[RMDB]
Record summary: Source: RMDB library M2RFPK, as collected in RNAgym. The record gives the reactivity of an RNA of 207 nucleotides to 2A3 and DMS. DMS adducts were read by reverse transcription with MarathonRT. 2A3 adducts were read by reverse transcription with SuperScript II with manganese.

RNA sequence: GGGAACGACUCGAGUAGAGUCGAAAAUUGGCGAAUGCCUGUGGAUCUACAUUUGUUGCGGGUUCGAGACCCGUCAGAGCCCGGCUCUGUAGCUCAAUGGUAGAGCGGUGUAUUCACAUAAACUCGUAAAAGACACGUGCCUUCGGGCACGUGUCAAGCAUACCUGUAGGUUCGCCUACAGGUAUGCAAAAGAAACAACAACAACAAC
Reactivity to 2A3 in 0.01 (KOAc 150mM, MgCl2 10mM, bicine 150mM(pH8.5), 24C), signal-to-noise 2, nucleotides 027 to 156: u090u040g020g000c030g060a180a040u260g010c010c030u020g000u020g000g010a030u010c050u160a020c030a030u060u040u280g060u050u030g020c000g010g000g000u000u010c010g020a000g000a030c020c010c000g010u000c000a000g000a000g010c150c300c140g090g000c010u020c010u000g010u000a010g000c000u000c030a030a090u150g280g050u270a010g000a000g020c010g010g000u000g000u040a010u010u030c010a010c000a010u120a100a110a070c050u060c070g080u090a000a020a000a160g010a000c000a000c010g000u010g000c000c000u010u010c210g070g010g020c000a000c000g000u040g000u000c000a000a020
Reactivity to DMS in 0.01 (KOAc 150mM, MgCl2 10mM, bicine 150mM(pH8.5), 24C), signal-to-noise 1, nucleotides 027 to 156: u000u010g000g040c000g010a040a090u010g000c110c020u000g020u000g020g010a030u000c020u010a050c010a070u020u000u000g020u010u010g000c000g020g000g000u000u020c020g020a300g010a060c010c020c000g020u010c010a110g030a130g030c020c080c060g090g000c010u000c020u020g090u000a070g020c040u000c000a160a070u010g010g000u000a000g000a010g150c010g010g010u000g020u000a170u010u000c050a030c050a090u000a110a060a100c010u000c060g010u000a050a150a040a300g020a040c000a020c000g010u000g000c020c010u020u010c300g020g060g040c000a000c000g090u020g000u010c000a000a060